[RMDB]
RNA sequence: GGGAACGACUCGAGUAGAGUCGAAAAGAGGGGGAUUAAGCGGGAGAGGCAUGAUGAGACUAAUCACAGAACUGAACUGACUGUGGGUCUGAUGAGCCGCAAGCGUCCAGAAACAGUGUGGUGGCAUGAGGUGCAGUCGACUGGCACAGAUGAGGUGCAUUACUUAUGCCUUCGGGCAUAAGUAAUGAAAAGAAACAACAACAACAAC
Reactivity to 2A3 in 0.01 (KOAc 150mM, MgCl2 10mM, bicine 150mM(pH8.5), 24C), signal-to-noise 3, nucleotides 027 to 156: g140a030g010g030g000g000g020a020u120u110a100a000g030c030g000g040g030a050g000a020g010g020c020a040u080g020a020u050g020a050g010a030c060u120a070a050u120c000a010c000a060g090a150a060c030u110g030a050a010c050u060g110a050c010u010g000u060g030g000g050u020c010u040g080a120u060g040a010g050c010c010g000c040a020a020g050c020g000u040c030c030a040g100a040a110a010c040a020g050u030g010u030g080g030u010g030g010c000a020u080g030a020g000g020u050g000c000a000g010u010c010g090a030c030u040g020g000c030a010c020a030g080a090u070g020a050g000g060u060g000
Reactivity to DMS in 0.01 (KOAc 150mM, MgCl2 10mM, bicine 150mM(pH8.5), 24C), signal-to-noise 1, nucleotides 027 to 156: g040a160g000g050g020g020g000a140u000u000a070a060g030c120g000g000g000a090g000a190g030g070c040a080u020g030a070u020g000a070g020a120c100u000a090a110u010c020a040c010a110g020a100a300c020u020g000a080a110c080u020g000a120c020u010g000u000g010g010g030u000c010u000g000a150u010g040a200g000c000c070g050c020a040a140g000c010g000u010c000c050a150g020a140a050a070c050a060g020u000g020u000g040g010u020g000g030c030a080u000g000a120g050g020u000g000c050a130g050u010c000g010a030c040u000g010g020c000a070c030a070g010a090u000g000a040g020g060u000g000
This 207-nucleotide RNA was probed chemically with 2A3 and DMS.
The reactions ran in a buffer of 150 mM KOAc, 10 mM MgCl2 and 150 mM bicine (pH 8.5), at 24 C.
The data come from the RNA Mapping Database (RMDB), library OK3TST.